The data come from the RNA Mapping Database (RMDB), library 15KLIB. This 170-nucleotide RNA was probed chemically with 2A3 and DMS. 2A3 adducts were read by reverse transcription with SuperScript II with manganese. Conditions: 150 mM KOAc, 10 mM MgCl2 and 150 mM bicine (pH 8.5), 24 C.

RNA sequence: GGGAACGACUCGAGUAGAGUCGAAAAUCGGUGAGUACAUUUUCGAGCGCAUUGAUUAUAGUGAUGCUGUAUCCUACAAGUCUAGUACAACGUAUAAACUGACUGUAGGUGACAUCUUCGUACUUACAAGCGGCUAACUUCGGUUAGCCGAAAAGAAACAACAACAACAAC
Reactivity to 2A3 in 0.01 (KOAc 150mM, MgCl2 10mM, bicine 150mM(pH8.5), 24C), signal-to-noise 6, nucleotides 027 to 129: u160c040g030g000u000g000a000g010u000a010c000a080u050u060u050u200c120g050a060g010c050g010c030a020u040u030g060a080u140u230a100u120a180g170u100g070a040u030g030c030u030g040u060a040u030c000c000u000a020c010a120a120g000u000c020u190a030g020u040a030c060a140a010c140g110u120a050u110a210a130a030c020u020g010a000c000u000g000u010a000g000g000u000g010a000c000a010u020c030u060u080c080g000u000a010c000u000u020a010c000a010a050g050
Reactivity to DMS in 0.01 (KOAc 150mM, MgCl2 10mM, bicine 150mM(pH8.5), 24C), signal-to-noise 5, nucleotides 027 to 129: u040c050g000g000u010g020a050g030u010a020c010a060u010u010u010u020c180g000a130g040c140g020c040a070u000u000g030a120u070u070a050u070a060g030u000g020a000u000g030c030u000g030u000a060u030c020c000u000a030c030a000a050g010u000c030u060a070g020u040a100c070a110a100c260g060u040a090u000a060a150a060c060u020g020a030c030u000g010u050a010g010g020u040g020a000c150a000u010c060u000u000c080g040u020a000c000u000u000a050c020a030a060g020